The record gives the reactivity of an RNA of 177 nucleotides to DMS and 2A3.
Values are in units of 0.01, from 0 to 300, in steps of 10.
For 2A3 the reverse transcriptase was SuperScript II with manganese.
For DMS, 1,214 sequencing reads were counted.
Conditions: 150 mM KOAc, 10 mM MgCl2 and 150 mM bicine (pH 8.5), 24 C.
[RMDB]
RNA sequence: GGGAACGACUCGAGUAGAGUCGAAAACUAGGUCUAGAGGGAAGUUAUGAGCAUUACGUUCAUGCAUAACUUCCAUACCAAGGUUAGCACGGUUGAUGAUAUCAGCCCAAGUGUUAAUUACACGACCCUGUCGUGCGUACUUCGGUACGCACGACAGAAAAGAAACAACAACAACAAC
Reactivity to DMS in 0.01 (KOAc 150mM, MgCl2 10mM, bicine 150mM(pH8.5), 24C), signal-to-noise 2, nucleotides 027 to 126: c070u000a020g010g020u020c040u060a050g030a300g000g000g010a030a000g000u000u000a000u000g000a020g030c030a190u000u070a110c300g000u000u010c150a050u110g000c070a000u000a000a000c010u000u000c000c000a000u060a030c070c060a230a090g000g000u000u000a010g080c000a000c000g000g000u000u000g000a050u000g040a090u000a300u000c000a000g000c000c070c300a040a150g000u040g000u000u070a000a000u000u000a290c270a150c110g010a000c000c000
Reactivity to 2A3 in 0.01 (KOAc 150mM, MgCl2 10mM, bicine 150mM(pH8.5), 24C), signal-to-noise 4, nucleotides 027 to 126: c020u030a050g000g000u000c050u040a030g030a080g040g080g010a000a000g010u000u000a040u080g170a060g100c020a020u110u170a150c180g110u130u210c050a010u030g020c000a000u000a000a000c000u000u000c000c000a000u000a000c000c020a050a020g060g000u010u010a000g020c000a000c000g010g050u030u000g020a040u050g020a080u070a060u300c000a000g000c020c040c020a100a070g000u000g000u010u000a010a000u040u080a040c080a000c160g020a010c010c000